[RMDB]
Chemical mapping of a 177-nucleotide RNA with 2A3. The reactions ran in a buffer of 150 mM KOAc, 10 mM MgCl2 and 150 mM bicine (pH 8.5), at 24 C. Reactivities are given for positions 27 through 126.
RNA sequence: GGGAACGACUCGAGUAGAGUCGAAAACACCGGCAUUUGCCGGUGGAAGGACGCGACAUCGAUUAUCGCGAAGCGGUCGAUGCCGCUCGUGGACGCCAUGUGCCUUGCGUGCCGGUGGCCGCGACCAGUCCUCCCAGGGAUUCGUCCCUGGGAGGACAAAAGAAACAACAACAACAAC
Reactivity to 2A3 in 0.01 (KOAc 150mM, MgCl2 10mM, bicine 150mM(pH8.5), 24C), signal-to-noise 1, nucleotides 027 to 126: c000a010c010c000g030g040c070a100u140u170u300g020c000c000g000g000u000g020g020a040a030g040g020a000c010g020c010g000a000c000a060u010c010g090a060u030u170a120u250c000g000c030g050a070a020g010c040g060g000u050c040g000a040u190g030c000c000g000c000u030c020g000u030g000g020a000c000g020c020c000a190u120g060u120g000c010c060u130u290g070c070g000u050g050c000c000g010g010u040g010g000c030c000g010c020g000a010c010c010a000